[RMDB]
RNA sequence: GGGAACGACUCGAGUAGAGUCGAAAAGCUGUAAACACCUGGAGAGAUACUGUGCCUUUCACAUCCCCACCAUGGACUCAGGCAGAAAGUCCAGCUGUAAACACCUGGAGAGAGAUGUCUCCUUUCAGUGCUACGAUACUUUCGAGUAUCGUAGCACAAAAGAAACAACAACAACAAC
Reactivity to DMS in 0.01 (KOAc 150mM, MgCl2 10mM, bicine 150mM(pH8.5), 24C), signal-to-noise 1, nucleotides 027 to 126: g000c030u000g010u000a110a090a130c130a030c090c040u000g000g000a030g000a110g000a080u010a090c140u020g000u000g000c020c010u030u000u000c100a040c070a140u010c040c000c020c000a020c070c130a070u020g000g020a090c070u020c090a080g050g030c040a050g000a100a080a020g000u010c050c020a020g030c060u000g000u010a070a130a170c190a090c140c050u000g000g000a000g010a090g030a060g000a150u020g000u000c030u000c050c000u000u020u000c110a050